The record gives the reactivity of an RNA of 177 nucleotides to 2A3.
Source: RMDB library RFM100, as collected in RNAgym.
Reactivities are given for positions 27 through 126.
The RNA was probed in 150 mM KOAc, 10 mM MgCl2 and 150 mM bicine (pH 8.5) at 24 C.
For 2A3, 496 sequencing reads were counted.
[RMDB]
RNA sequence: GGGAACGACUCGAGUAGAGUCGAAAAUACUGCUCCAGUUGUCACUGGACCUCCCCAGAGUAAACUGCCUUUUGAUGACCAGGGCGAAUUGAGUGAAAUCGUCAUGGACAGAUACGGGGCAGACAAUCGACCACCCUUGAUUCGUCAAGGGUGGUCGAAAAGAAACAACAACAACAAC
Reactivity to 2A3 in 0.01 (KOAc 150mM, MgCl2 10mM, bicine 150mM(pH8.5), 24C), signal-to-noise 2, nucleotides 027 to 126: u050a000c110u100g080c100u020c020c010a000g000u110u110g020u300c000a070c040u000g050g000a070c110c000u170c000c000c000c000a040g010a000g020u170a100a070a100c000u050g000c000c000u120u100u000u130g000a000u060g000a020c000c000a000g020g000g020c060g040a250a180u170u230g130a210g160u300g050a190a240a000u000c000g000u020c000a060u050g000g010a160c000a000g000a060u010a070c070g050g000g050g000c000a000g050a000c060a000a200u190